RNA sequence: GGGAACGACUCGAGUAGAGUCGAAAACAGGCUUCGGCCACCGGGCAUGACGCUGUUGCCAGCACGGUCAGCCUCGGCCGCUACCGGGUCGGGGUCGAUGAGCCGGCGCCCCUCGGUGGGGAUGCCAUCGUAAUUAUACUUUCGAGUAUAAUUACGAAAAAGAAACAACAACAACAAC
Reactivity to 2A3 in 0.01 (KOAc 150mM, MgCl2 10mM, bicine 150mM(pH8.5), 24C), signal-to-noise 9, nucleotides 027 to 126: c040a030g010g010c010u040u030c040g270g070c030c000a010c010c000g000g010g000c100a150u220g040a100c040g030c070u090g070u280u130g070c060c030a030g030c050a050c080g050g030u040c020a010g000c000c000u000c000g000g010c000c010g050c070u140a150c050c100g080g000g000u010c000g000g000g000g020u070c020g030a090u060g010a010g040c010c000g010g000c010g020c010c010c000c000u030c020g020g000u030g000g000g010g000a010u060g000c000c010a020
Reactivity to DMS in 0.01 (KOAc 150mM, MgCl2 10mM, bicine 150mM(pH8.5), 24C), signal-to-noise 6, nucleotides 027 to 126: c110a120g010g010c010u000u010c030g000g000c000c000a030c050c020g020g010g020c300a090u040g000a050c080g000c030u000g010u020u040g010c060c030a110g030c080a110c130g000g010u010c040a100g010c010c000u010c010g000g000c010c010g020c120u030a060c170c150g000g000g010u000c000g000g000g000g010u000c030g000a050u010g010a170g010c020c020g000g010c010g000c020c000c220c010u010c070g010g010u010g000g000g000g000a030u010g000c000c010a110

The data come from the RNA Mapping Database (RMDB), library OK1LIB. The record gives the reactivity of an RNA of 177 nucleotides to 2A3 and DMS. For DMS, 20,023 sequencing reads were counted. For 2A3, 39,898 sequencing reads were counted.